[RMDB]
RNA sequence: GGGAACGACUCGAGUAGAGUCGAAAACAUCCAGUGUUCGCACUGGAUGAGAGGAAUGUGGAUCGGCAAACUACUUACCAAAAGCUGAGCUCGAAAGAGCAACGAUUUCGUCGUUCGCGACGAAAAAUCGAUUCAAAUAGUUCGCUAUUUGAAUCGAAAAAGAAACAACAACAACAAC
Reactivity to DMS in 0.01 (KOAc 150mM, MgCl2 10mM, bicine 150mM(pH8.5), 24C), signal-to-noise 6, nucleotides 027 to 126: c020a000u000c000c000a000g000u000g020u010u010c230g050c010a020c010u000g000g000a010u000g000a090g010a080g000g010a070a070u010g010u000g010g000a100u000c030g020g000c050a070a070a100c070u000a080c060u000u000a180c050c040a060a050a070a090g000c090u000g000a160g020c010u000c010g000a070a100a110g000a010g010c010a090a070c180g010a180u000u000u000c010g020u000c010g020u010u010c180g020c010g020a010c000g010a000a010a020a070a100
Reactivity to 2A3 in 0.01 (KOAc 150mM, MgCl2 10mM, bicine 150mM(pH8.5), 24C), signal-to-noise 6, nucleotides 027 to 126: c010a000u010c000c000a000g000u010g040u030u090c220g030c100a000c000u000g020g000a000u010g000a010g010a000g010g090a130a090u140g020u070g050g040a080u050c040g040g030c040a050a090a060c040u090a040c010u050u070a090c040c000a050a070a020a030g050c070u090g050a010g030c000u000c010g050a100a050a040g010a010g000c010a010a020c030g060a070u030u000u000c010g010u000c010g000u030u070c270g000c010g070a000c000g000a030a000a000a000a000
This 177-nucleotide RNA was probed chemically with DMS and 2A3. The RNA was probed in 150 mM KOAc, 10 mM MgCl2 and 150 mM bicine (pH 8.5) at 24 C. The DMS profile rests on 7,226 reads. The 2A3 profile rests on 15,788 reads.